Source information: Structure probing data (2A3 and DMS) for a 177-nucleotide construct. It was measured as part of the RMDB library OK2TST. For DMS, 1,932 sequencing reads were counted. For 2A3, 1,081 sequencing reads were counted. For 2A3 the reverse transcriptase was SuperScript II with manganese.
[RMDB]
RNA sequence: GGGAACGACUCGAGUAGAGUCGAAAAGUGGCGGUGAUCACCCUCUUUAUCGUAGUCCUUGGAGGGUGUGAUGUGGGUCUGGGCGAACAGGUCGAUGUGGCCCGUCCAAGAGUUGCGCUCACCAGCCCGUGAAGUGACGGUUCGCCGUCACUUCACGAAAAGAAACAACAACAACAAC
Reactivity to 2A3 in 0.01 (KOAc 150mM, MgCl2 10mM, bicine 150mM(pH8.5), 24C), signal-to-noise 1, nucleotides 027 to 126: g010u090g010g000c010g020g060u040g030a070u030c000a000c000c020c000u030c000u100u260u080a210u130c090g210u110a060g120u070c060c000u050u130g000g010a000g000g030g000u010g030u000g020a060u060g030u090g000g040g050u020c000u040g000g000g000c000g010a120a040c030a010g000g080u050c030g110a280u110g150u300g160g020c060c010c010g000u000c000c000a040a040g050a010g160u040u200g000c050g020c040u030c000a000c010c000a020g000c000c000
Reactivity to DMS in 0.01 (KOAc 150mM, MgCl2 10mM, bicine 150mM(pH8.5), 24C), signal-to-noise 1, nucleotides 027 to 126: g040u000g000g030c000g010g020u000g000a080u000c020a020c030c010c000u040c000u000u000u020a100u010c140g030u020a210g010u000c020c080u010u010g000g000a030g000g010g000u010g010u000g000a020u010g000u000g000g000g000u000c030u000g000g000g000c010g030a080a090c190a110g000g010u000c050g000a180u000g030u010g010g000c040c010c020g020u000c000c000a040a070g000a080g000u000u030g000c000g030c240u000c010a040c000c020a150g000c010c010